[RMDB]
RNA sequence: GGGAACGACUCGAGUAGAGUCGAAAAGGAAAACCGAACUCCGGCAUCAGGAGCAACUAUUUUCCUUAUGAGAGUCUGAAAGAUGUAUGUCAGAUGGAUUUCUGCAAGAGGAAAGGAUUCAAGCUCCCAACCACGGAGCAUUCGUGCUCCGUGGUUGAAAAGAAACAACAACAACAAC
Reactivity to 2A3 in 0.01 (KOAc 150mM, MgCl2 10mM, bicine 150mM(pH8.5), 24C), signal-to-noise 4, nucleotides 027 to 126: g070g000a050a020a010a020c060c050g020a050a040c040u020c040c000g080g000c080a130u110c070a070g000g030a000g000c000a030a010c000u020a100u060u010u010u000c000c000u020u030a130u160g090a020g010a000g000u000c020u050g060a120a110a100g090a090u090g120u260a080u300g090u130c010a020g010a120u110g060g060a080u230u300u030c000u070g150c030a030a090g000a030g050g000a010a030a040g000g000a010u190u060c030a020a000g010c000u080c010c010
Reactivity to DMS in 0.01 (KOAc 150mM, MgCl2 10mM, bicine 150mM(pH8.5), 24C), signal-to-noise 2, nucleotides 027 to 126: g040g000a040a030a120a210c040c010g060a130a170c040u000c070c040g000g000c100a080u040c160a070g010g000a000g010c030a130a030c160u110a150u030u000u000u000c000c000u000u000a120u030g000a050g000a030g000u000c010u010g000a060a210a050g010a010u020g010u030a090u020g030u000c000a090g000a230u000g010g000a010u000u020u010c020u000g010c010a040a300g020a000g000g030a010a090a080g010g000a050u030u020c160a050a040g000c020u010c000c030